The record gives the reactivity of an RNA of 177 nucleotides to 2A3 and DMS. The DMS profile rests on 22,801 reads.
RNA sequence: GGGAACGACUCGAGUAGAGUCGAAAAGAAAAGACGAUGUUAUUAUGAUUCUCGAGUAAUAGCAGGUCACGCGUACUACUCGCCGAACGGAAGGCAGACUGUUCGCGAAAUGAAACGAGCAAGAAAAAGUGAGGAUAAUAUUCGUAUUAUCCUCACUAAAAGAAACAACAACAACAAC
Reactivity to 2A3 in 0.01 (KOAc 150mM, MgCl2 10mM, bicine 150mM(pH8.5), 24C), signal-to-noise 9, nucleotides 027 to 126: g070a010a090a000a020g040a010c050g080a170u010g010u010u010a040u020u000a020u050g130a140u160u050c070u040c080g030a030g010u030a010a020u010a010g000c010a010g020g050u030c020a020c080g020c010g010u030a030c010u010a020c000u030c060g010c010c020g040a120a080c090g060g090a090a050g070g000c010a020g130a200c040u030g000u030u050c010g000c010g040a050a050a080u230g030a050a040a040c090g030a020g070c060a110a060g080a140a130a020a010
Reactivity to DMS in 0.01 (KOAc 150mM, MgCl2 10mM, bicine 150mM(pH8.5), 24C), signal-to-noise 8, nucleotides 027 to 126: g000a090a090a100a120g000a050c010g010a080u000g000u000u000a010u010u000a010u010g000a160u010u020c040u010c060g020a290g010u000a020a020u000a020g010c000a030g000g010u010c030a100c090g010c040g010u010a080c050u010a100c120u010c050g000c060c020g000a040a050c120g000g000a080a090g000g010c110a060g000a100c040u000g000u000u000c000g010c040g010a050a090a110u030g000a050a070a060c040g000a060g000c130a060a070g010a060a040a060a040
For 2A3 the reverse transcriptase was SuperScript II with manganese. For DMS the reverse transcriptase was MarathonRT. The reactions ran in a buffer of 150 mM KOAc, 10 mM MgCl2 and 150 mM bicine (pH 8.5), at 24 C. It was measured as part of the RMDB library OK1LIB.